[RMDB]
RNA sequence: GGGAACGACUCGAGUAGAGUCGAAAACAAUCACAUGACGCCUAGGGGAAAGUCCCCGGAUCUCGGGUAGAAAGUGCCGUGCGCUACUAUGGCGUGCAAUAAUCCCGCCCUGCUGUCCAUAUCAACCUAAACGUAAGACUUUCGAGUCUUACGUUUAAAAAGAAACAACAACAACAAC
Reactivity to 2A3 in 0.01 (KOAc 150mM, MgCl2 10mM, bicine 150mM(pH8.5), 24C), signal-to-noise 9, nucleotides 027 to 126: c010a010a060u130c040a020c030a120u100g060a050c020g010c000c010u110a100g030g000g010g050a060a210a060g150u120c010c000c000c000g010g010a050u030c060u030c040g040g010g000u050a040g110a060a150a020g070u060g050c050c030g020u050g010c050g010c020u110a110c040u070a110u220g020g000c010g000u020g000c010a000a050u100a080a040u050c020c010c000g010c000c000c000u020g000c020u030g020u000c000c010a050u070a040u170c020a030a060c010c020
Reactivity to DMS in 0.01 (KOAc 150mM, MgCl2 10mM, bicine 150mM(pH8.5), 24C), signal-to-noise 7, nucleotides 027 to 126: c090a140a110u030c080a090c070a080u010g000a120c080g000c020c020u000a090g020g010g000g000a090a120a140g010u010c030c010c010c020g010g010a080u010c050u020c060g000g010g000u020a050g000a070a070a080g000u010g010c090c090g020u000g000c040g010c020u010a070c130u020a080u030g010g020c020g010u000g010c040a080a050u030a070a110u010c020c010c020g010c040c010c010u000g010c020u000g000u010c010c050a060u020a050u020c100a080a100c090c050